Chemical mapping of a 177-nucleotide RNA with 2A3 and DMS. Source: RMDB library RFM100, as collected in RNAgym. Reactivities are given for positions 27 through 126. The reactions ran in a buffer of 150 mM KOAc, 10 mM MgCl2 and 150 mM bicine (pH 8.5), at 24 C.
RNA sequence: GGGAACGACUCGAGUAGAGUCGAAAAACGGAGGAUGUACGCAUCCUCCGACGCAGUUGUAAGUUGACAUAGUCCCAGGGCCAAGUACAGCGAUGCAACCCGGGACUACGUUAACUUCCAGCCUCAACCAUGGGGUUUCUUUCGAGAAACCCCAUGGAAAAGAAACAACAACAACAAC
Reactivity to 2A3 in 0.01 (KOAc 150mM, MgCl2 10mM, bicine 150mM(pH8.5), 24C), signal-to-noise 2, nucleotides 027 to 126: a010c000g010g000a020g000g000a010u010g020u080a010c220g000c100a000u000c000c010u000c000c000g000a020c030g020c050a020g010u030u030g020u020a000a000g000u000u000g020a000c000a010u010a010g000u000c010c060c060a070g010g000g000c080c040a230a020g030u100a150c070a090g040c060g220a090u100g000c040a020a020c010c000c000g000g000g000a000c000u000a000c010g000u000u000a000a000c000u000u000c010c030a030g030c020c000u110c050a090a100
Reactivity to DMS in 0.01 (KOAc 150mM, MgCl2 10mM, bicine 150mM(pH8.5), 24C), signal-to-noise 1, nucleotides 027 to 126: a130c000g000g020a060g000g010a030u000g050u000a010c160g090c000a010u000c000c000u010c000c000g000a030c080g010c200a070g020u000u010g000u000a000a000g000u000u000g000a010c030a000u000a000g000u010c030c000c000a180g000g010g020c050c000a170a290g070u060a160c220a090g000c100g000a070u050g040c000a150a300c000c020c000g010g040g000a020c000u000a000c030g040u000u000a000a000c060u000u000c000c000a060g000c110c040u000c160a050a280